[RMDB]
RNA sequence: GGGAACGACUCGAGUAGAGUCGAAAAGAUAUGGACGCUGAAGGCUGCAUGACUUCGGAAACGAAGUAUGCAUCAGGCCUCAGCGUCCUAAGUCAAAUCUUUUACACGGUUCGCCGUGUAAAAGAAAUCCAUCUAUAAGCUUCGGCUUAUAGAUGGAAAAAGAAACAACAACAACAAC
Reactivity to 2A3 in 0.01 (KOAc 150mM, MgCl2 10mM, bicine 150mM(pH8.5), 24C), signal-to-noise 3, nucleotides 027 to 126: g000a000u010a010u040g000g000a000c010g010c000u010g060a130a030g070g030c130u220g030c110a010u120g270a200c000u030u000c020g000g010a010a020a000c000g010a010a010g000u010a010u010g010c020a110u190c170a110g300g000c000c000u010c000a010g000c000g000u000c000c000u000a000a000g000u000c010a000a000a120u000c000u020u020u000u000a000c000a010c000g000g080u060u060c300g030c130c000g000u000g010u000a000a000a000a000g000a030a010a000
Reactivity to DMS in 0.01 (KOAc 150mM, MgCl2 10mM, bicine 150mM(pH8.5), 24C), signal-to-noise 3, nucleotides 027 to 126: g000a000u000a010u010g000g000a020c010g030c000u000g020a050a030g030g020c000u000g020c000a000u000g020a040c000u000u000c000g020g000a010a010a020c000g020a010a000g020u000a000u000g010c000a270u010c300a220g010g020c000c000u000c000a000g000c000g010u000c000c000u000a000a060g000u000c010a150a170a150u000c000u000u000u000u000a010c000a010c000g000g010u000u000c240g030c000c000g010u010g000u000a000a000a010a010g010a010a090a110